The data come from the RNA Mapping Database (RMDB), libraries RFM100 and RFMREP.
Structure probing data (DMS and 2A3) for a 177-nucleotide construct.
The reactions ran in a buffer of 150 mM KOAc, 10 mM MgCl2 and 150 mM bicine (pH 8.5), at 24 C.
Reactivities are given for positions 27 through 126.
RNA sequence: GGGAACGACUCGAGUAGAGUCGAAAACGGCGCUACGUUGUACGGAAGACAGAAGACCGACCGGCGAAUGCUUCCUCAGUUCGCCGCUCUCGAAGUCGCAGCAGCAGACACGGUUUUGGGUAUCCCCUACACUGAGAGCUUUCGAGCUCUCAGUGUAAAAAGAAACAACAACAACAAC
Reactivity to DMS in 0.01 (KOAc 150mM, MgCl2 10mM, bicine 150mM(pH8.5), 24C), signal-to-noise 3, nucleotides 027 to 126: c060g010g000c020g010c060u000a050c080g010u020u010g010u030a070c120g020g000a080a060g000a100c120a090g010a070a060g000a110c100c030g000a080c130c020g000g000c020g000a030a040u000g020c030u010u000c020c020u010c060a280g000u010u020c020g010c000c000g010c040u000c010u000c030g000a100a110g000u000c010g010c070a080g010c060a050g000c000a040g010a110c090a110c070g010g010u000u000u000u000g000g000g010u010a130u010c020c000c020c170
Reactivity to 2A3 in 0.01 (KOAc 150mM, MgCl2 10mM, bicine 150mM(pH8.5), 24C), signal-to-noise 3, nucleotides 027 to 126: c010g030g010c020g000c040u060a000c050g060u110u090g090u100a080c060g040g060a030a010g040a060c060a020g070a080a010g020a070c040c040g030a070c090c050g000g000c000g020a050a010u060g010c040u080u070c000c030u080c030a010g030u010u020c020g000c000c000g020c000u000c000u020c000g070a110a000g030u060c020g000c070a050g010c000a000g040c020a020g010a030c040a010c080g030g000u000u000u040u040g060g010g020u060a030u050c010c000c000c010